[RMDB]
RNA sequence: GGGAACGACUCGAGUAGAGUCGAAAAUGGACGUUGUUCGCAACGUCCACAUACUGAGACGUACGUUAAACGUAUCGCGGGCAAAAGUGCAGUUAGUAUAAGUACCUAUUGAGUUCGCUCAAUAGAACACUAUCAAUGCAUUCGUGCAUUGAUAGUGAAAAGAAACAACAACAACAAC
Reactivity to 2A3 in 0.01 (KOAc 150mM, MgCl2 10mM, bicine 150mM(pH8.5), 24C), signal-to-noise 7, nucleotides 027 to 126: u060g000g000a010c000g000u010u010g030u050u060c150g000c110a000a010c000g000u000c000c000a000c000a000u040a000c010u080g060a020g040a100c020g020u020a000c010g030u040u220a130a200a020c010g000u030a030u160c050g000c020g030g070g000c030a050a080a050a030g090u080g010c030a030g020u060u110a040g030u120a080u020a230a040g040u040a080c000c000u000a010u000u010g010a000g020u030u090c240g040c040u000c000a000a000u010a020g030a040a010
Reactivity to DMS in 0.01 (KOAc 150mM, MgCl2 10mM, bicine 150mM(pH8.5), 24C), signal-to-noise 7, nucleotides 027 to 126: u010g000g000a020c000g020u000u000g020u010u010c210g010c010a010a010c000g000u000c000c010a020c130a040u010a060c050u000g000a110g010a120c070g020u000a010c020g010u000u010a080a100a190c040g010u000a020u020c070g020c040g010g010g010c070a040a050a070a110g010u000g010c030a070g000u010u000a060g000u000a040u000a070a070g010u010a100c130c000u000a010u000u000g000a020g020u000u020c200g010c000u000c010a000a000u000a010g000a110a160